[RMDB]
RNA sequence: GGGAACGACUCGAGUAGAGUCGAAAAUAACUCGUCGUAGUCAAGCAUUGCUUGAGGUGGCACAGGGAAGAGCUGUGGUGGCUCAGUUCGUAAAGCUACACCUGGAGAACUUUGAUUUUAAUAUAACCAUUCAUGUCUGGUUCGCCAGACAUGAAUGAAAAGAAACAACAACAACAAC
Reactivity to 2A3 in 0.01 (KOAc 150mM, MgCl2 10mM, bicine 150mM(pH8.5), 24C), signal-to-noise 1, nucleotides 027 to 126: u100a000a020c010u010c060g040u010c100g030u060a020g100u070c000a010a010g030c090a240u090u300g000c000u070u030g090a070g000g080u030g020g000c010a010c050a070g050g080g020a070a050g030a030g040c000u040g040u060g100g150u040g000g000c010u000c020a020g000u090u000c010g030u140a200a000a000g000c030u050a040c000a020c060c020u010g080g000a020g010a100a060c000u170u050u080g100a130u060u110u030u200a100a070u140a010u020a140a010c010
Reactivity to DMS in 0.01 (KOAc 150mM, MgCl2 10mM, bicine 150mM(pH8.5), 24C), signal-to-noise 1, nucleotides 027 to 126: u010a110a120c040u000c060g010u000c110g030u000a070g010u000c030a080a140g020c050a180u020u020g020c020u010u030g000a040g030g010u000g000g000c110a030c080a160g000g030g010a100a060g010a090g000c070u000g010u000g020g020u000g040g000c010u000c000a040g030u000u000c030g000u010a040a060a160g000c030u010a040c050a060c060c010u000g010g030a110g000a080a060c070u000u000u000g010a080u000u000u020u020a060a090u010a090u000a110a130c110
Source: RMDB library RFMREP, as collected in RNAgym. This 177-nucleotide RNA was probed chemically with 2A3 and DMS.